Source: RMDB libraries RFM100 and RFMREP, as collected in RNAgym. An RNA of 177 nucleotides, treated with DMS and 2A3 and read out base by base.
RNA sequence: GGGAACGACUCGAGUAGAGUCGAAAAGUAAUGACGAGAAGUUUACAAAGUAAUAUCUGUUCCCGUAUGGGAAUUUUUUCAAGUCCCGGAGUCUAUGAAAGAUAUAUAUGGGUCAAGCCUGAGUUCGCUAUAUACUUGCCUUCGGGCAAGUAUAUAGAAAAGAAACAACAACAACAAC
Reactivity to DMS in 0.01 (KOAc 150mM, MgCl2 10mM, bicine 150mM(pH8.5), 24C), signal-to-noise 2, nucleotides 027 to 126: g010u010a050a050u010g000a090c050g010a120g020a160a160g010u020u020u010a100c060a120a090a170g010u010a050a070u010a060u010c020u010g010u010u000c010c010c020g030u010a030u030g010g000g000a020a000u000u020u030u010u010u020c080a050a150g010u000c010c000c010g000g000a080g020u000c040u010a080u020g030a070a070a060g000a040u010a070u010a070u010a070u020g000g020g020u010c060a050a110g010c030c030u000g010a110g010u010u000c070g000
Reactivity to 2A3 in 0.01 (KOAc 150mM, MgCl2 10mM, bicine 150mM(pH8.5), 24C), signal-to-noise 2, nucleotides 027 to 126: g010u070a120a040u060g050a050c040g020a010g080a210a180g010u040u020u060a070c050a060a120a000g060u060a110a180u060a090u200c020u030g010u000u030c000c010c010g020u050a080u090g020g000g000a010a030u020u000u000u000u040u240c130a160a000g030u030c000c000c000g000g030a030g060u020c060u060a080u150g100a040a010a010g070a000u020a000u010a000u000a020u140g080g000g000u020c080a080a060g050c000c020u090g020a030g050u040u090c000g010

For 2A3, 815 sequencing reads were counted. The reactions ran in a buffer of 150 mM KOAc, 10 mM MgCl2 and 150 mM bicine (pH 8.5), at 24 C.